Chemical mapping of a 207-nucleotide RNA with DMS and 2A3.
[RMDB]
RNA sequence: GGGAACGACUCGAGUAGAGUCGAAAAUAAAUUCAGAGGAAUGCAGCUAUGCCAGAAGCCAGAGAAGAGCCACUCGUAGCUUCUGCUUUGGGGACAACUGGUCAGUUGAAAGUCCCAGGAGUUCCUUUGUGGCUUUCUGUAUACUUUUGCCUGGUUAAUAUCCGGUAGGAUUCGUCCUACCGGAUAUAAAAGAAACAACAACAACAAC
Reactivity to DMS in 0.01 (KOAc 150mM, MgCl2 10mM, bicine 150mM(pH8.5), 24C), signal-to-noise 1, nucleotides 027 to 156: u000a070a010a170u000u010c030a070g040a070g000g010a100a090u010g030c030a070g020c070u000a050u000g090c040c000a040g010a040a120g010c000c020a070g020a100g000a060a070g000a070g010c000c020a050c030u000c160g020u010a040g000c010u000u000c060u000g010c020u000u010u000g050g000g000g040a080c010a030a300c010u000g030g030u010c050a090g020u000u000g000a090a120a190g010u010c100c010c010a030g000g000a300g000u000u000c010c030u000u000u000g000u000g030g000c030u000u000u000c000u000g010u010a100u010a070c030u010u000u010u020g040c100c020u010g030g020u000u000a080
Reactivity to 2A3 in 0.01 (KOAc 150mM, MgCl2 10mM, bicine 150mM(pH8.5), 24C), signal-to-noise 1, nucleotides 027 to 156: u190a020a070a050u060u080c010a000g030a050g010g050a180a010u040g010c000a020g010c040u210a000u170g000c000c000a000g000a000a030g030c000c100a070g010a000g020a110a020g000a010g020c010c020a010c000u050c050g100u050a010g010c030u020u020c020u060g000c040u030u110u120g040g000g000g000a000c000a030a010c070u070g080g020u110c050a060g050u080u120g210a220a180a030g020u080c070c000c000a000g000g010a000g000u070u030c010c000u050u130u050g020u000g000g000c000u000u120u000c000u000g000u000a040u020a090c000u030u000u110u090g070c010c010u050g040g150u110u160a050
Values cover nucleotides 27 to 156. The RNA was probed in 150 mM KOAc, 10 mM MgCl2 and 150 mM bicine (pH 8.5) at 24 C. It was measured as part of the RMDB library OK3TST. DMS adducts were read by reverse transcription with MarathonRT.